[RMDB]
RNA sequence: GGGAACGACUCGAGUAGAGUCGAAAAUUAGACCCCCUUCCUUAUCACAAGGACAGAGGGAUUUCUGUAUCCCAGGGUUUCCUGCCUUGGUGUACGGGAAGAGUCGGCUCACACCUGGGCUUGGAGAAUGAGUGCAAGGUUUAUUAGUAGAAGUAGAAUUUAUGGUAGUCUUCGGACUACCAUAAAUAAAAGAAACAACAACAACAAC
Reactivity to DMS in 0.01 (KOAc 150mM, MgCl2 10mM, bicine 150mM(pH8.5), 24C), signal-to-noise 2, nucleotides 027 to 156: u000u000a060g000a220c030c010c010c010c000u000u010c020c010u000u000a160u000c130a160c190a080a020g000g010a030c110a040g030a070g020g000g000a080u000u000u000c030u000g010u000a130u010c300c020c000a140g040g010g000u000u010u000c100c080u000g000c020c000u010u010g010g000u000g070u000a060c110g010g070g010a050a090g010a130g020u000c030g040g000c020u000c030a100c060a080c060c020u000g000g020g010c040u010u000g010g010a080g010a090a120u010g000a070g000u000g030c030a050a080g020g000u000u000u000a050u030u000a100g030u000a100g020a110a130g000u010a090g000a140
Reactivity to 2A3 in 0.01 (KOAc 150mM, MgCl2 10mM, bicine 150mM(pH8.5), 24C), signal-to-noise 3, nucleotides 027 to 156: u100u050a050g100a090c000c010c010c010c010u010u040c010c000u080u050a140u270c090a040c050a150a000g000g010a030c040a050g040a140g010g020g020a020u040u090u050c030u050g010u020a080u040c000c000c000a000g040g000g000u000u220u160c030c030u070g000c010c000u010u030g040g000u040g010u020a050c060g010g000g000a020a050g020a020g090u060c030g030g000c000u020c000a070c020a010c040c000u030g020g030g040c080u050u090g010g020a060g020a070a120u100g040a030g070u040g010c040a050a010g050g020u050u100u110a110u100u070a080g060u030a020g050a110a010g040u080a030g050a130